[RMDB]
RNA sequence: GGGAACGACUCGAGUAGAGUCGAAAACAGAUCAAGAGGUAAUGAUUAAUGGAAGCAAUUUGGGGGAAUUAGUAUUACGACGCUAGAGCUGAAAUUCUUGGACCGUCGUAAGACUACCUUAAGCGAACUGUUCUUCACCAUUCGUGGUGAAGAACAGAAAAGAAACAACAACAACAAC
Reactivity to DMS in 0.01 (KOAc 150mM, MgCl2 10mM, bicine 150mM(pH8.5), 24C), signal-to-noise 3, nucleotides 027 to 126: c040a130g000a070u010c040a060a030g010a160g010g020u000a090a080u050g000a030u060u000a070a070u020g000g010a080a100g000c050a080a110u030u030u020g000g010g020g000g000a160a140u040u000a010g000u000a040u010u000a000c000g010a010c020g010c040u000a050g010a020g000c080u020g010a070a060a070u010u000c010u000u000g000g000a130c300c030g000u000c010g010u000a000a020g000a020c010u000a030c090c040u000u000a050a090g030c160g030a030a150
Reactivity to 2A3 in 0.01 (KOAc 150mM, MgCl2 10mM, bicine 150mM(pH8.5), 24C), signal-to-noise 3, nucleotides 027 to 126: c030a000g060a090u040c030a050a080g080a070g070g120u120a130a030u070g150a040u070u120a060a090u060g060g060a050a040g030c040a020a120u090u110u090g070g010g000g020g050a080a120u130u030a040g000u000a000u000u000a000c000g010a000c010g000c030u040a020g000a000g030c030u050g050a020a020a120u090u010c000u030u120g050g060a080c030c030g000u000c000g000u000a000a020g000a000c000u040a080c000c050u080u080a020a040g010c040g100a010a030
Notes:
Conditions: 150 mM KOAc, 10 mM MgCl2 and 150 mM bicine (pH 8.5), 24 C. The record gives the reactivity of an RNA of 177 nucleotides to DMS and 2A3. It was measured as part of the RMDB libraries RFM100 and RFMREP. Values cover nucleotides 27 to 126.